Chemical mapping of a 207-nucleotide RNA with 2A3 and DMS. The RNA was probed in 150 mM KOAc, 10 mM MgCl2 and 150 mM bicine (pH 8.5) at 24 C. For DMS the reverse transcriptase was MarathonRT. The data come from the RNA Mapping Database (RMDB), library RNAMAK. DMS (dimethyl sulfate) methylates the pairing face of unpaired adenines and cytosines. Reactivities are given for positions 27 through 156. 2A3 adducts were read by reverse transcription with SuperScript II with manganese.

[RMDB]
RNA sequence: GGGAACGACUCGAGUAGAGUCGAAAAGGGGUCAUCGUAACAUCACAGUUUGUCAGCUGCCACUGAAGCCUCCACGGUGGGACAGCUUGGAUUUAACUGUGUGGAUGACGGAGGCACCCAAAAGCGCCUAUCUCAUGUUCGCAUGAGAUAGGCGCAACGAAAGGAAGUUGUUCGCAACUUCCUUUCGAAAAGAAACAACAACAACAAC
Reactivity to 2A3 in 0.01 (KOAc 150mM, MgCl2 10mM, bicine 150mM(pH8.5), 24C), signal-to-noise 3, nucleotides 027 to 156: g110g010g030g030u020c020a020u010c040g120u160a100a080c060a100u190c000a000c020a000g020u040u090u110g150u220c010a020g010c000u000g000c000c010a000c010u020g030a090a030g040c010c000u000c000c010a010c000g010g020u010g000g040g120a120c010a000g000c000u050u190g130g030a120u100u120u180a030a020c010u000g000u010g000u040g080g010a010u020g000a010c000g000g000a000g020g000c030a050c000c010c020a030a120a040a000g000c000g000c020c000u000a010u010c000u000c000a020u020g020u080u070c270g020c150a010u000g000a000g010a000u000a000g000g000c010g000c000a000a000
Reactivity to DMS in 0.01 (KOAc 150mM, MgCl2 10mM, bicine 150mM(pH8.5), 24C), signal-to-noise 1, nucleotides 027 to 156: g020g040g020g030u000c020a060u000c050g050u020a130a160c130a150u020c030a010c000a000g030u000u000u000g000u000c020a060g000c000u000g010c000c010a060c020u010g000a060a240g010c010c000u000c020c010a300c060g000g050u000g000g010g000a120c010a010g050c000u000u000g020g010a190u010u020u000a010a020c010u000g030u030g030u010g020g020a090u010g000a080c030g050g020a050g050g040c010a070c000c000c000a010a040a120a260g030c000g000c000c000u000a010u030c000u000c000a000u030g060u000u000c300g050c030a030u000g010a020g000a030u010a010g020g000c000g000c000a000a000